[RMDB]
RNA sequence: GGGAACGACUCGAGUAGAGUCGAAAAGGUGUGGUCCGCGCGCGUUCACUCGCCAAGCGCAUCGAUGCGCAGCUUGCCAUCGUUGACAAGCGCCGCGAACGCCCCGGUGAAUCGGAAGUCAUGAACAGUGAGGCUGAUGAUUCGUCAUCAGCCUCACAAAAGAAACAACAACAACAAC
Reactivity to DMS in 0.01 (KOAc 150mM, MgCl2 10mM, bicine 150mM(pH8.5), 24C), signal-to-noise 1, nucleotides 027 to 126: g020g030u000g020u000g000g020u000c020c020g010c140g010c210g080c000g020u000u000c080a080c080u010c120g030c050c080a090a150g030c090g020c010a010u010c130g000a040u000g000c150g030c010a160g020c270u050u000g020c000c010a030u010c090g020u000u000g000a070c110a080a090g000c040g030c060c070g030c020g000a010a030c040g010c000c040c030c060g030g010u030g010a070a050u000c040g000g000a140a040g020u000c010a110u020g010a050a110c200a060
Reactivity to 2A3 in 0.01 (KOAc 150mM, MgCl2 10mM, bicine 150mM(pH8.5), 24C), signal-to-noise 1, nucleotides 027 to 126: g000g020u060g030u060g120g020u020c000c030g000c010g000c010g000c000g060u010u090c040a020c040u040c060g030c010c030a110a070g040c060g000c130a020u050c020g020a030u030g020c050g020c130a070g290c210u140u210g000c020c000a080u040c010g020u070u000g040a010c020a060a070g010c000g020c050c100g000c020g000a000a000c000g010c000c000c000c000g060g050u130g010a040a080u100c060g040g030a060a030g050u060c010a070u130g040a110a020c020a110